[RMDB]
RNA sequence: GGGAACGACUCGAGUAGAGUCGAAAAACAAAGCAUGGCUAGAAGAUGCCACCGCGGAUAGAGCUGAGGUACUCUAGACUUCUUGCCAGAAGAAUUCCCAAACCGCGGAGAGUGCUCUCGCAAAAAAGUUGUGUUAUAACUUCGGUUAUAACACAACAAAAGAAACAACAACAACAAC
Reactivity to DMS in 0.01 (KOAc 150mM, MgCl2 10mM, bicine 150mM(pH8.5), 24C), signal-to-noise 2, nucleotides 027 to 126: a050c190a080a180a110g010c050a190u010g030g010c000u000a030g000a000a070g030a220u000g050c180c110a190c020c010g000c010g020g000a200u000a050g020a030g000c070u000g010a080g010g020u000a050c020u000c000u000a130g020a110c010u000u010c010u000u000g000c000c010a060g000a060a230g000a100a200u010u000c000c020c000a060a030a220c020c020g030c000g030g030a150g000a060g000u010g000c030u000c020u000c080g020c180a000a070a070a070a040a100
Reactivity to 2A3 in 0.01 (KOAc 150mM, MgCl2 10mM, bicine 150mM(pH8.5), 24C), signal-to-noise 2, nucleotides 027 to 126: a000c030a020a070a010g110c020a060u000g010g000c010u010a000g000a040a010g040a050u170g090c040c010a010c000c000g000c010g070g010a100u190a170g120a030g040c180u160g040a040g060g070u070a020c010u010c000u030a050g080a200c000u030u020c000u040u040g000c010c000a000g000a080a020g000a030a090u020u010c000c000c000a010a080a010c000c010g030c000g020g010a000g000a000g010u040g010c000u020c000u020c190g060c000a080a030a010a060a060a070